Source information:
Chemical mapping of a 177-nucleotide RNA with DMS and 2A3. For DMS the reverse transcriptase was MarathonRT. Values cover nucleotides 27 to 126. For 2A3, 1,019 sequencing reads were counted. It was measured as part of the RMDB library OK2TRN. The RNA was probed in 150 mM KOAc, 10 mM MgCl2 and 150 mM bicine (pH 8.5) at 24 C.
RNA sequence: GGGAACGACUCGAGUAGAGUCGAAAAUGCAGCGGCAACAUUGCUUCCGUAUUGGCGGGUUCGCGGCAUGGUUGCACAACCGGUGCUAAAAACGCUCGGAGCGCCAGUUGCCACAACAGAUGUGGUGCUAACCGUCCUGGUUCGCCAGGACGGUUAGAAAAGAAACAACAACAACAAC
Reactivity to DMS in 0.01 (KOAc 150mM, MgCl2 10mM, bicine 150mM(pH8.5), 24C), signal-to-noise 2, nucleotides 027 to 126: u000g020c070a070g040c080g020g010c020a060a100c040a080u130u010g000c030u010u000c010c000g000u010a130u010u010g040g010c000g020g020g000u000u000c140g020c170g010g000c020a030u000g010g020u000u010g020c200a100c200a090a050c020c040g000g030u000g010c000u000a030a050a060a050a060c070g010c050u000c020g010g010a070g000c000g010c050c060a060g000u000u000g000c000c010a040c010a010a070c180a080g020a090u000g010u000g000g000u030g000
Reactivity to 2A3 in 0.01 (KOAc 150mM, MgCl2 10mM, bicine 150mM(pH8.5), 24C), signal-to-noise 1, nucleotides 027 to 126: u110g000c000a030g030c040g060g020c010a080a000c010a150u140u160g000c000u140u000c020c030g020u020a200u200u180g050g000c050g030g140g000u140u180c030g010c060g080g000c000a020u060g090g040u080u160g050c130a010c070a090a060c050c010g130g000u060g000c040u060a180a040a000a040a000c050g000c030u060c050g030g000a040g000c040g020c030c000a110g010u160u100g000c020c000a010c010a000a000c040a030g190a150u150g010u000g060g080u120g060